[RMDB]
RNA sequence: GGGAACGACUCGAGUAGAGUCGAAAAGGGGUCAGCGACAUGGAAGCGCACUUUCAACAGCCUACCUGAAGCCUCCACGGGUAGGACAUGAAAGGAUCUUCCAACAGCGCUGACGGAGGCACCCAAAGUUAGUUCAACUUUCGAGUUGAACUAACAAGAUAAAUUGAAACUUCGGUUUCAAUUUAUCAAAAGAAACAACAACAACAAC
Reactivity to DMS in 0.01 (KOAc 150mM, MgCl2 10mM, bicine 150mM(pH8.5), 24C), signal-to-noise 2, nucleotides 027 to 156: g020g000g020g000u000c020a070g030c010g030a070c110a300u000g040g010a030a020g040c150g040c180a110c020u000u000u000c030a090a090c050a120g000c000c000u000a020c000c010u000g010a050a120g000c020c010u000c010c020a300c020g020g000g000u030a010g000g010a030c050a140u000g000a000a060a030g010g010a150u000c030u000u000c000c000a000a090c110a170g000c010g030c000u000g000a010c010g030g010a050g010g060c010a120c000c020c010a080a090a130g010u000u000a020g010u000u000c000a020a020c000u000u010u010c200g030a030g030u000u000g000a000a010c000u000a000a000c000a080a180
Reactivity to 2A3 in 0.01 (KOAc 150mM, MgCl2 10mM, bicine 150mM(pH8.5), 24C), signal-to-noise 6, nucleotides 027 to 156: g060g020g080g020u020c010a000g010c010g040a080c150a240u300g000g010a010a000g000c080g020c140a110c090u030u030u010c090a200a140c040a140g020c000c000u000a000c000c000u030g030a090a010g010c000c000u000c010c000a020c000g000g000g000u000a000g000g020a020c020a140u210g010a010a000a000g020g030a080u020c000u000u000c010c020a060a030c070a080g040c010g000c000u000g000a000c000g000g000a000g010g000c010a060c020c010c010a030a080a000g000u000u000a000g000u000u000c000a000a000c000u050u090u140c280g110a020g010u000u000g000a000a000c000u000a000a000c000a000a000